Source: RMDB library OK1LIB, as collected in RNAgym. Structure probing data (DMS and 2A3) for a 177-nucleotide construct.
[RMDB]
RNA sequence: GGGAACGACUCGAGUAGAGUCGAAAAAGUUUAAUGGUGAUCCGAAUAAUGCAUUGUCAGAACUUAGAAAUCAUUCAAUUGAUAUGUUGGCAGAUGUGAAUCAAAAACAUUUUGAUUUAAUUAAGUCAGUCUCUGAAGAUUUCGAUCUUCAGAGACUAAAAGAAACAACAACAACAAC
Reactivity to DMS in 0.01 (KOAc 150mM, MgCl2 10mM, bicine 150mM(pH8.5), 24C), signal-to-noise 1, nucleotides 027 to 126: a160g000u010u020u010a050a040u010g000g000u000g020a060u030c050c110g010a040a100u010a030a090u020g000c110a060u000u000g000u040c000a030g000a100a040c040u000u010a070g010a120a100a030u010c010a040u010u050c210a000a040u030u000g000a080u030a040u000g000u000u000g010g000c010a010g020a000u000g000u000g010a000a010u000c010a000a040a000a100a130c270a190u000u010u000u000g000a000u010u010u000a110a050u020u010a000a060g000u040c090
Reactivity to 2A3 in 0.01 (KOAc 150mM, MgCl2 10mM, bicine 150mM(pH8.5), 24C), signal-to-noise 2, nucleotides 027 to 126: a000g040u030u030u070a040a040u000g010g050u010g000a040u000c110c000g000a000a000u300a250a020u060g000c020a090u110u180g090u200c060a010g070a040a000c000u000u040a050g120a080a180a000u060c040a030u010u010c160a210a260u090u080g150a010u070a250u130g020u180u250g060g000c010a010g060a300u010g060u010g110a010a000u030c010a000a040a000a000a120c070a070u090u050u000u000g000a000u000u010u010a040a070u080u000a000a000g010u030c080

For DMS, 1,835 sequencing reads were counted. In probing experiments dimethyl sulfate is read out at A N1 and C N3, which are open when not base-paired.